An RNA of 177 nucleotides, treated with DMS and 2A3 and read out base by base. For 2A3 the reverse transcriptase was SuperScript II with manganese. Source: RMDB library OK2TRN, as collected in RNAgym. For DMS, 662 sequencing reads were counted. Values are in units of 0.01, from 0 to 300, in steps of 10.
RNA sequence: GGGAACGACUCGAGUAGAGUCGAAAACAUUUGGUGGUGUGACUCAACUCAACCAAACUAAAUAUUGAGAAACUUUUUGUAUCGCCAAAGAAGCACAGCCUUUUUGCAGAAGGGGCAAGGGGGGGAGACCGUUUAGAAUCUUCGGAUUCUAAACGGUAAAAGAAACAACAACAACAAC
Reactivity to DMS in 0.01 (KOAc 150mM, MgCl2 10mM, bicine 150mM(pH8.5), 24C), signal-to-noise 1, nucleotides 027 to 126: c060a170u000u000u000g040g020u000g010g060u000g010u010g000a140c100u000c120a040a060c130u010c020a090a060c130c050a030a080a170c140u030a090a120a150u000a170u000u000g000a060g010a050a080a060c070u000u000u020u040u000g040u000a040u000c040g000c000c000a020a070a010g000a140a110g000c060a050c180a130g000c020c050u000u000u000u010u000g040c110a100g020a090a090g010g010g000g030c010a050a040g000g020g010g000g000g000g000a110g010
Reactivity to 2A3 in 0.01 (KOAc 150mM, MgCl2 10mM, bicine 150mM(pH8.5), 24C), signal-to-noise 1, nucleotides 027 to 126: c030a000u030u050u070g000g000u030g030g030u000g040u020g020a040c040u030c120a020a080c010u000c060a030a050c070c000a150a030a030c010u070a130a070a150u280a070u090u200g000a020g000a090a140a020c040u170u140u000u100u150g120u030a030u070c010g000c000c000a020a000a020g100a060a010g000c080a030c040a170g010c020c020u030u180u120u160u070g000c040a030g000a140a040g070g060g040g040c020a020a020g010g000g010g010g000g000g000a000g010